The record gives the reactivity of an RNA of 177 nucleotides to 2A3 and DMS.
RNA sequence: GGGAACGACUCGAGUAGAGUCGAAAAAUCGUCAUCGGUGAAUAUUGCAUCAUAAUUUGAAUUUGCAAUAUAGAUCCUGUAUUCUCCAGAGACGUCAGUAUUUACAUUAACCUUUAGGUCUUACACAAGUAUAUGAGGAUUUCGAUCCUCAUAUACUAAAAGAAACAACAACAACAAC
Reactivity to 2A3 in 0.01 (KOAc 150mM, MgCl2 10mM, bicine 150mM(pH8.5), 24C), signal-to-noise 9, nucleotides 027 to 126: a000u060c030g060u030c030a180u050c080g030g000u020g020a020a010u020a000u010u020g010c020a000u020c020a030u100a300a240u180u120u190g160a200a140u090u090u130g060c020a010a000u050a010u030a060g080a030u040c010c010u010g030u030a060u030u020c020u000c010c010a020g020a000g000a060c020g020u040c030a030g040u050a140u100u180u110a080c090a100u110u120a070a090c010c010u080u110u140a090g040g040u040c050u060u140a070c100a010c030a120
Reactivity to DMS in 0.01 (KOAc 150mM, MgCl2 10mM, bicine 150mM(pH8.5), 24C), signal-to-noise 8, nucleotides 027 to 126: a080u020c030g010u010c040a070u020c130g000g000u010g000a170a020u000a000u010u000g000c100a030u010c080a050u050a080a170u030u040u020g010a110a120u050u040u010g010c000a010a000u000a030u010a060g000a090u000c040c010u020g020u010a050u010u010c000u010c010c030a100g010a110g000a050c050g000u020c140a060g000u020a040u010u010u030a060c090a080u020u030a090a090c050c010u010u020u020a070g000g010u020c030u010u010a060c170a080c190a050

The reactions ran in a buffer of 150 mM KOAc, 10 mM MgCl2 and 150 mM bicine (pH 8.5), at 24 C. The data come from the RNA Mapping Database (RMDB), library OK1LIB.